[RMDB]
RNA sequence: GGGAACGACUCGAGUAGAGUCGAAAAGAGUUUGGUUCUGAGGUUGAAGAGUUCCACAUCUGGACCAAUGUAAAAGCAUCAGCUCCAAAAGGCAGCACUACAACAGAUGAAAGCUCUGCUACACCAACUCGUAUGGUAGGUUCGCCUACCAUACGAGAAAAGAAACAACAACAACAAC
Reactivity to DMS in 0.01 (KOAc 150mM, MgCl2 10mM, bicine 150mM(pH8.5), 24C), signal-to-noise 3, nucleotides 027 to 126: g000a050g000u000u010u000g010g030u010u000c020u000g010a060g050g000u010u010g030a090a050g000a030g000u020u000c160c150a130c050a050u020c040u010g000g040a190c200c110a060a100u040g020u010a060a040a130a120g000c000a020u050c160a080g030c020u000c050c010a100a080a100a140g000g010c100a090g000c060a060c080u000a020c050a090a110c010a000g000a010u000g000a110a080a030g010c040u000c000u000g000c080u030a110c130a030c060c000a090a270
Reactivity to 2A3 in 0.01 (KOAc 150mM, MgCl2 10mM, bicine 150mM(pH8.5), 24C), signal-to-noise 6, nucleotides 027 to 126: g090a020g010u070u070u050g020g000u030u020c020u030g080a040g070g020u050u050g050a060a040g060a050g090u120u060c050c030a060c010a050u010c020u060g050g020a120c010c030a040a030u140g010u140a020a060a120a020g010c020a040u050c080a050g020c030u050c080c050a090a110a060a080g040g050c050a020g020c030a050c050u080a030c010a160a010c010a060g020a020u020g060a110a050a000g010c020u010c000u050g030c030u050a030c010a010c040c010a050a060
This 177-nucleotide RNA was probed chemically with DMS and 2A3. Conditions: 150 mM KOAc, 10 mM MgCl2 and 150 mM bicine (pH 8.5), 24 C. DMS adducts were read by reverse transcription with MarathonRT. High DMS reactivity at an A or C suggests that its Watson-Crick edge is free. It was measured as part of the RMDB library OK1LIB.